[RMDB]
Background: Structure probing data (DMS) for a 177-nucleotide construct.
RNA sequence: GGGAACGACUCGAGUAGAGUCGAAAACUGCAGCAAAAUGUCGGUGUGGGGGUUACGGAUCAGGUGCAGUCCAAGCGGCCCUUCAUGUUGACUGAGCUGGAGGGCUGCAUUGCGAACAAUCUGGGCGGACCGUUCUUUGGUUCGCCAAAGAACGGUCAAAAGAAACAACAACAACAAC
Reactivity to DMS in 0.01 (KOAc 150mM, MgCl2 10mM, bicine 150mM(pH8.5), 24C), signal-to-noise 2, nucleotides 027 to 126: c060u000g020c050a030g020c090a080a090a120a080u000g010u000c050g010g000u000g050u010g010g000g020g000g010u000u000a100c130g000g010a080u020c060a060g000g010u010g010c080a140g000u000c040c020a080a100g000c000g040g010c000c010c000u000u000c010a020u010g010u010u020g020a170c220u000g000a030g000c010u000g000g000a020g000g000g000c000u000g000c030a010u000u000g000c160g000a020a050c120a110a060u000c050u010g010g000g000c050g020
The reactions ran in a buffer of 150 mM KOAc, 10 mM MgCl2 and 150 mM bicine (pH 8.5), at 24 C. The data come from the RNA Mapping Database (RMDB), library OK2TST.